[RMDB]
RNA sequence: GGGAACGACUCGAGUAGAGUCGAAAAGGCGUAGACGACAACAUGCCCAGGUAGCCCAGACCUUCAAGGCUACGGUGCGUUGCGACGCACGGUCUGAUUCUUCACAACGACGUUCACCGCGUCUUCUACAACCGGCAAAGAUUCGUCUUUGCCGGAAACCCAUAAUUACCUUCGGGUAAUUAUGGGUAAAAGAAACAACAACAACAAC
Reactivity to 2A3 in 0.01 (KOAc 150mM, MgCl2 10mM, bicine 150mM(pH8.5), 24C), signal-to-noise 4, nucleotides 027 to 156: g050g000c040g030u070a030g030a190c090g050a020c050a100a010c030a120u140g030c020c010c030a080g030g040u000a010g000c000c010c030a030g030a030c020c030u070u050c020a010a010g010g020c000u000a000c010g000g000u020g000c000g010u010u080g050c180g080a020c000g030c000a010c000g000g000u000c000u000g020a080u150u040c070u130u200c050a060c030a250a090c080g020a000c010g070u160u170c060a070c110c020g010c010g030u020c040u040u000c040u100a070c040a100a050c020c000g000g000c010a000a000a000g010a010u030u030c010g010u000c020u000u000u000g010c000c000g010g000a000a010
Reactivity to DMS in 0.01 (KOAc 150mM, MgCl2 10mM, bicine 150mM(pH8.5), 24C), signal-to-noise 2, nucleotides 027 to 156: g000g050c030g030u010a040g000a140c040g010a120c070a120a110c050a090u000g010c020c000c100a090g010g000u010a020g000c020c010c130a100g000a090c030c070u010u000c050a100a260g000g020c020u000a030c000g040g000u010g030c020g020u010u000g020c140g000a160c060g010c010a040c020g000g040u000c010u020g000a250u000u000c070u010u000c110a100c040a060a090c020g020a070c020g000u000u000c030a080c050c030g010c060g000u010c010u010u030c050u000a080c140a120a210c000c000g000g020c000a050a010a030g000a060u010u020c300g050u000c010u000u000u000g010c000c010g010g000a000a020